[RMDB]
RNA sequence: GGGAACGACUCGAGUAGAGUCGAAAAGGUGAGCUGGACGGGAAGUAGGUCCAGCGACUGCUUCCGAAGCUUUGAUAAGAGCAACUCCAUCUACGUUGCUAAAGUAGGUGGUAGCAGCAAACACCGACCUGCAUGCAUGAUUCGUCAUGCAUGCAGGAAAAGAAACAACAACAACAAC
Reactivity to 2A3 in 0.01 (KOAc 150mM, MgCl2 10mM, bicine 150mM(pH8.5), 24C), signal-to-noise 5, nucleotides 027 to 126: g010g010u040g010a010g000c010u020g020g010a020c020g060g150g060a110a030g120u250a020g140g040u000c000c010a000g000c010g000a020c000u000g000c000u020u010c020c020g040a140a000g010c010u070u040u100g130a180u190a150a150g030a000g040c000a000a060c020u000c050c000a140u030c020u030a050c050g090u070u160g120c080u140a140a080a000g010u010a010g000g040u050g020g000u010a000g000c010a010g000c020a120a020a000c010a010c000c010g030a040
Reactivity to DMS in 0.01 (KOAc 150mM, MgCl2 10mM, bicine 150mM(pH8.5), 24C), signal-to-noise 3, nucleotides 027 to 126: g000g000u000g000a110g020c000u000g000g000a020c020g010g010g020a040a160g010u080a090g020g000u000c000c000a020g000c010g030a080c000u000g000c020u000u000c000c020g000a300a200g000c020u000u000u030g010a090u050a120a110g060a010g000c010a010a090c010u000c190c120a180u060c110u010a060c170g010u000u000g000c090u070a000a010a010g000u000a020g000g000u050g000g000u000a020g000c000a010g010c110a090a110a300c020a020c010c000g000a210